[RMDB]
RNA sequence: GGGAACGACUCGAGUAGAGUCGAAAAGGGCCAUGUCAAACUGUCCACCGAUAAAGUCGUUGGCCUCGAACAGCGUGACCCGGUGACCCCGUUGCGCGGCGUUGGCCGCCGUGGCCAGCCCGGCUGGUAUCGGAGCUGUCUUCGGACAGCUCCGAUAAAAAGAAACAACAACAACAAC
Reactivity to DMS in 0.01 (KOAc 150mM, MgCl2 10mM, bicine 150mM(pH8.5), 24C), signal-to-noise 1, nucleotides 027 to 126: g000g020g040c000c000a020u030g020u030c000a120a220a130c080u000g010u000c000c000a080c050c040g000a040u000a040a140a190g030u000c010g030u000u000g030g010c030c040u000c170g000a070a080c180a160g010c010g020u000g000a030c040c020c020g040g020u000g000a160c050c040c020c060g000u020u000g010c040g020c040g000g010c140g000u000u000g000g030c040c010g040c130c100g050u010g030g000c000c010a080g010c030c020c010g010g000c060u000g000g000

Chemical mapping of a 177-nucleotide RNA with DMS. The DMS profile rests on 822 reads. Values cover nucleotides 27 to 126.